[RMDB]
RNA sequence: GGGAACGACUCGAGUAGAGUCGAAAAAUGGUAGAAUCAGUCGGGGCCUGAGAGGCGGUGGUUUACCCUGUGGCGGAUGUCAGCGGUUCGAGUCCGCUUAUCUCCAACUCGUGAACUUAGCCGAUCCUCAGUGUUUCCGUUUCGACGGAAACACUGAAAAAGAAACAACAACAACAAC
Reactivity to DMS in 0.01 (KOAc 150mM, MgCl2 10mM, bicine 150mM(pH8.5), 24C), signal-to-noise 1, nucleotides 027 to 126: a030u000g000g000u040a050g010a150a040u000c060a050g010u000c000g000g000g000g020c130c060u020g020a050g000a120g030g030c070g050g030u000g000g020u000u010u010a010c030c170c100u010g020u000g030g000c220g020g000a030u000g000u000c270a040g000c030g030g000u000u000c270g020a300g000u000c030c010g030c020u000u010a000u000c050u000c060c050a050a030c030u000c100g000u000g030a100a040c030u000u020a210g010c030c010g000a080u000c060c060